[RMDB]
RNA sequence: GGGAACGACUCGAGUAGAGUCGAAAAUCUAAGAGCGUAACACACACUCAGACAGUACGACAGUCUGACACACACAUACGCUAGUGUAUCGUGUGUGUGAUAUCGAUGUAGCACGAAAAUGAAAGAAAUGACGGAGCAUGUUCGCAUGCUCCGUCAUAAAAGAAACAACAACAACAAC
Reactivity to 2A3 in 0.01 (KOAc 150mM, MgCl2 10mM, bicine 150mM(pH8.5), 24C), signal-to-noise 1, nucleotides 027 to 126: u040c020u050a010a030g020a000g170c010g070u080a090a000c020a010c010a000c060a030c040u000c070a000g040a080c010a070g060u140a080c070g020a020c110a000g040u000c060u070g020a000c020a000c000a000c000a010c010a000u050a000c020g030c080u000a040g070u090g020u150a010u020c020g000u000g000u000g000u050g000u000g010a010u010a030u070c040g000a040u070g040u080a000g010c080a000c140g140a030a030a030a140u300g050a000a140a000g080a010a240
Reactivity to DMS in 0.01 (KOAc 150mM, MgCl2 10mM, bicine 150mM(pH8.5), 24C), signal-to-noise 1, nucleotides 027 to 126: u000c040u060a080a070g020a060g040c090g000u000a140a090c070a080c080a040c110a050c110u000c020a080g080a090c000a070g000u030a070c200g000a010c090a050g000u000c030u000g000a020c030a020c010a000c000a040c000a000u000a020c000g010c280u030a110g050u000g020u000a020u000c140g050u000g000u000g070u030g000u010g000a100u000a100u030c090g020a030u000g020u020a040g000c110a040c060g000a060a100a050a070u000g000a030a030a110g020a020a200

Source: RMDB library M2PK90, as collected in RNAgym. This 177-nucleotide RNA was probed chemically with 2A3 and DMS. 2A3 adducts were read by reverse transcription with SuperScript II with manganese. The reactions ran in a buffer of 150 mM KOAc, 10 mM MgCl2 and 150 mM bicine (pH 8.5), at 24 C. Values cover nucleotides 27 to 126. For DMS, 654 sequencing reads were counted. For DMS the reverse transcriptase was MarathonRT. Reactivities are rounded to 0.1 and cut off at 0 and 3.